[RMDB]
RNA sequence: GGGAACGACUCGAGUAGAGUCGAAAAUUCAGAUGCAUCCAGCGUUGCGGCAGAUGAAACCGACAUUUCAGGCUUUGACUUCAACCCCACCUUUGGCCACAGAUGGCAAUUUUGAAGAAGAAAGUGUGGGCAUAAGUAGAAUAAAUCCAGAUCCUAACUGAUAUCAAUCAUUCGUGAUUGAUAUCAGAAAAGAAACAACAACAACAAC
Reactivity to DMS in 0.01 (KOAc 150mM, MgCl2 10mM, bicine 150mM(pH8.5), 24C), signal-to-noise 2, nucleotides 027 to 156: u020u010c050a060g030a120u000g040c050a070u010c040c040a160g020c050g030u000u000g010c060g030g010c070a090g040a080u030g010a020a110a010c020c030g000a080c040a100u010u010u000c040a080g000g010c070u010u000u010g020a120c010u010u000c110a070a120c100c020c010c000a050c030c020u010u000u000g030g010c020c030a240c080a130g000a140u010g030g020c010a070a100u000u000u000u000g010a070a080g020a130a130g000a060a070a060g010u000g010u000g020g020g020c010a040u010a070a070g010u000a080g000a060a080u000a040a140a070u000c050c040a120g000a130u000c030c010u000a020a250
Reactivity to 2A3 in 0.01 (KOAc 150mM, MgCl2 10mM, bicine 150mM(pH8.5), 24C), signal-to-noise 4, nucleotides 027 to 156: u100u060c010a000g030a070u060g030c020a040u030c040c020a020g030c050g060u070u080g020c030g020g010c010a020g030a140u050g020a070a050a050c040c020g050a050c070a090u090u130u080c040a060g060g000c050u060u040u080g050a080c000u050u000c030a030a080c010c000c000c000a000c000c020u030u030u040g070g000c010c010a070c040a130g170a220u140g040g000c030a030a070u100u160u150u170g050a070a070g030a030a010g040a030a060a020g080u120g000u020g090g020g000c010a040u100a090a020g030u050a020g040a120a020u050a090a070a010u010c040c020a030g010a090u060c010c020u050a060a100

This 207-nucleotide RNA was probed chemically with DMS and 2A3. For 2A3, 2,548 sequencing reads were counted.